[RMDB]
RNA sequence: GGGAACGACUCGAGUAGAGUCGAAAAUGGCAAUUUAAUAUGGGGUGAACGGGGCUACCACUCGAAAAGAUUCUUUGCCAACUAUUUUGAUGUUAUUGACCCAUCUCAAGGGUAUGAGAAAUAUGUGACCGCUACACUUAUUCGUAAGUGUAGCGGUAAAAGAAACAACAACAACAAC
Reactivity to 2A3 in 0.01 (KOAc 150mM, MgCl2 10mM, bicine 150mM(pH8.5), 24C), signal-to-noise 1, nucleotides 027 to 126: u050g000g020c010a010a010u040u080u150a230a090u170a060u150g020g030g020g000u000g030a090a000c090g020g000g050g100c030u000a030c060c000a030c020u000c000g100a170a040a020a020g060a000u190u000c000u000u000u100g000c020c000a010a000c010u040a150u150u100u120u060g100a080u060g020u230u070a120u060u120g010a030c000c000c000a010u050c030u000c040a040a050g130g010g020u040a080u090g030a030g020a050a000a000u200a030u110g150u080g070
Reactivity to DMS in 0.01 (KOAc 150mM, MgCl2 10mM, bicine 150mM(pH8.5), 24C), signal-to-noise 2, nucleotides 027 to 126: u000g010g020c010a020a120u000u000u010a070a060u000a110u000g020g030g000g030u010g030a080a130c090g020g000g000g000c030u000a060c120c020a050c020u000c010g040a070a090a140a170g000a110u000u000c070u000u020u000g020c070c030a020a050c070u000a010u000u000u000u000g020a140u000g010u000u000a100u010u000g000a100c030c030c070a100u010c030u000c100a100a140g000g010g000u000a060u010g010a170g000a000a030a070u020a080u000g000u000g000
This 177-nucleotide RNA was probed chemically with 2A3 and DMS. DMS adducts were read by reverse transcription with MarathonRT. Reactivities are rounded to 0.1 and cut off at 0 and 3. The 2A3 profile rests on 674 reads. The DMS profile rests on 1,081 reads.